The record gives the reactivity of an RNA of 177 nucleotides to DMS and 2A3. For DMS, 45,575 sequencing reads were counted. Values are in units of 0.01, from 0 to 300, in steps of 10. The reactions ran in a buffer of 150 mM KOAc, 10 mM MgCl2 and 150 mM bicine (pH 8.5), at 24 C. Source: RMDB library OK2TRN, as collected in RNAgym. For 2A3 the reverse transcriptase was SuperScript II with manganese.

[RMDB]
RNA sequence: GGGAACGACUCGAGUAGAGUCGAAAAGCUGUGUGCCCACGAGCUCGGAUCGGCAAGGUCGCCGUCCUUGCCCGCAUGGCCGGGCGUCACCACGGUGGGCGGUGGCACAUCGUCAAUGCCAAUGUCCCUCAACUAUAUCUUUCGAGAUAUAGUUGAGAAAAGAAACAACAACAACAAC
Reactivity to DMS in 0.01 (KOAc 150mM, MgCl2 10mM, bicine 150mM(pH8.5), 24C), signal-to-noise 9, nucleotides 027 to 126: g010c030u010g010u000g010u010g000c020c010c040a090c080g010a170g010c010u000c040g010g010a070u010c080g010g010c010a040a030g000g010u010c120g020c100c110g010u000c000c010u000u000g010c020c010c160g020c220a080u010g010g010c020c020g000g000g010c010g010u010c070a090c090c070a090c140g020g010u000g010g000g020c030g010g010u000g010g000c010a050c060a060u000c170g000u000c110a070a090u000g010c020c030a090a120u010g000u000c040c040
Reactivity to 2A3 in 0.01 (KOAc 150mM, MgCl2 10mM, bicine 150mM(pH8.5), 24C), signal-to-noise 9, nucleotides 027 to 126: g020c030u020g010u010g040u080g120c020c020c010a030c040g060a030g000c010u010c020g040g020a140u050c030g010g000c020a020a020g070g020u090c080g070c190c040g050u090c000c000u000u030g020c030c020c020g080c080a150u180g150g010c020c000g010g000g000c010g050u050c030a050c060c010a060c100g090g010u060g010g030g000c040g010g010u050g010g010c010a010c010a090u090c040g110u070c040a070a100u100g030c020c010a060a080u100g060u050c020c010